[RMDB]
RNA sequence: GGGAACGACUCGAGUAGAGUCGAAAAACUUCCCUACGCUGUGGGACAUGCAUCCGUAGACCAUUUCUCUGCUGUAAAUGCUGCUAUGAUCAUGUUAUAGCAACUCCACAUAAGAUGGUUUUGUCUGCUGAUGGCAUGAGUUCGCUCAUGCCAUCAGAAAAGAAACAACAACAACAAC
Reactivity to 2A3 in 0.01 (KOAc 150mM, MgCl2 10mM, bicine 150mM(pH8.5), 24C), signal-to-noise 1, nucleotides 027 to 126: a000c010u030u040c000c000c000u030a030c110g080c040u040g010u060g020g020g020a010c000a040u000g030c010a000u000c050c030g010u000a000g070a100c010c030a020u010u010u010c040u020c030u080g160c050u100g040u140a040a030a030u080g030c030u000g010c010u040a000u070g010a030u020c020a060u180g070u090u020a020u010a040g040c000a000a010c000u000c000c000a030c000a030u060a060a160g030a080u090g030g000u000u010u030u060g040u080c040u010g000
Reactivity to DMS in 0.01 (KOAc 150mM, MgCl2 10mM, bicine 150mM(pH8.5), 24C), signal-to-noise 1, nucleotides 027 to 126: a050c300u020u000c000c000c000u010a080c170g030c040u000g040u000g010g000g000a090c040a110u010g000c070a030u000c060c070g000u010a040g000a120c130c020a020u010u010u000c040u000c090u000g010c150u000g040u010a030a090a020u010g010c080u000g060c030u000a040u000g010a020u010c140a070u020g010u000u000a010u000a040g000c020a010a060c020u000c060c240a020c060a030u000a040a100g010a030u020g000g000u010u010u000u000g000u000c050u010g000
Structure probing data (2A3 and DMS) for a 177-nucleotide construct. The 2A3 profile rests on 937 reads. DMS adducts were read by reverse transcription with MarathonRT. As a SHAPE reagent, 2A3 marks flexible, mostly unpaired nucleotides at the ribose 2'-OH. For DMS, 839 sequencing reads were counted. The reactions ran in a buffer of 150 mM KOAc, 10 mM MgCl2 and 150 mM bicine (pH 8.5), at 24 C.